Notes: Conditions: 150 mM KOAc, 10 mM MgCl2 and 150 mM bicine (pH 8.5), 24 C. Structure probing data (DMS and 2A3) for a 307-nucleotide construct. The DMS profile rests on 10,932 reads. It was measured as part of the RMDB library POS240.
RNA sequence: GGGAACGACUCGAGUAGAGUCGAAAAUAACGACCUUACUUGAACAGGAUCUGUUCUAUAGGCUCGUACCUCUGUAUUCUUGAUUCCUAAGAAGACAGAAACCCAUGUCUGGUUGAUGAACCAUUACCAUGUAGCCAGAGCGUGAACCAUUACCAUGUAGCCAGAGCGUGAUUAACAGAGCCUUUGGUCUAGACCAUGGCUCAGUAGAGGAUCGUUGCCAGCCAUCUGAUGGGUCUUGGCAUGGCUCCAUGGUUGUCUGACAGACUAGCACAUCCUUCGGGAUGUGCAAAAGAAACAACAACAACAAC
Reactivity to DMS in 0.01 (KOAc 150mM, MgCl2 10mM, bicine 150mM(pH8.5), 24C), signal-to-noise 4, nucleotides 027 to 266: u020a140a060c010g020a030c030c010u000u010a090c180u010u010g000a000a020c020a010g000g010a220u020c020u010g010u000u000c010u010a080u000a040g000g010c300u000c020g040u010a150c220c070u000c020u000g000u000a040u000u000c010u010u000g010a240u020u020c110c100u010a090a050g000a030a020g020a020c000a010g000a040a130a140c120c100c020a100u010g010u000c040u000g000g000u000u010g000a060u000g010a130a120c150c160a090u020u010a090c130c040a010u000g020u010a050g020c040c020a030g010a090g010c050g000u010g000a120a080c160c100a070u010u000a060c040c050a010u000g000u010a030g000c010c010a040g050a110g030c030g000u000g000a290u020u010a100a030c040a120g000a020g000c010c000u010u000u010g000g010u010c100u020a130g010a030c000c000a010u000g010g000c010u000c010a030g020u000a110g010a050g000g010a090u010c040g000u000u010g000c020c000a060g000c020c010a020u010c170u010g010a050u020g010g000g000u020c040u040u000g010g000c020a090u010g010g010c010u000c030c000a010u000g000g010u000u010g010u000c030u010g010a080c150a110g010a050c040u000a180
Reactivity to 2A3 in 0.01 (KOAc 150mM, MgCl2 10mM, bicine 150mM(pH8.5), 24C), signal-to-noise 2, nucleotides 027 to 266: u160a010a020c010g010a040c010c000u070u060a070c120u090u220g010a010a010c020a020g160g090a210u170c080u030g000u000u010c020u010a080u050a080g010g020c100u010c050g030u080a130c010c010u000c000u000g010u010a050u020u000c000u060u060g230a260u250u050c030c020u000a030a010g000a000a000g010a000c000a000g020a120a090a040c050c010c000a120u120g060u000c030u010g050g120u090u060g120a080u060g040a100a060c080c030a080u040u060a070c050c020a070u120g140u190a000g000c000c000a010g030a010g120c030g010u020g040a010a010c030c000a040u020u030a010c030c000a010u020g030u020a010g010c000c000a030g040a000g090c000g020u040g040a080u040u060a030a030c030a080g000a020g050c000c000u040u070u150g040g000u030c060u040a020g080a030c010c000a030u040g000g000c000u000c030a020g010u040a060g020a050g100g020a010u040c020g010u030u080g020c000c020a000g020c030c000a050u120c160u190g070a170u240g090g040g010u040c040u090u060g070g010c000a030u010g000g000c000u010c010c020a000u000g000g000u000u070g000u000c000u020g050a020c020a040g090a020c010u140a010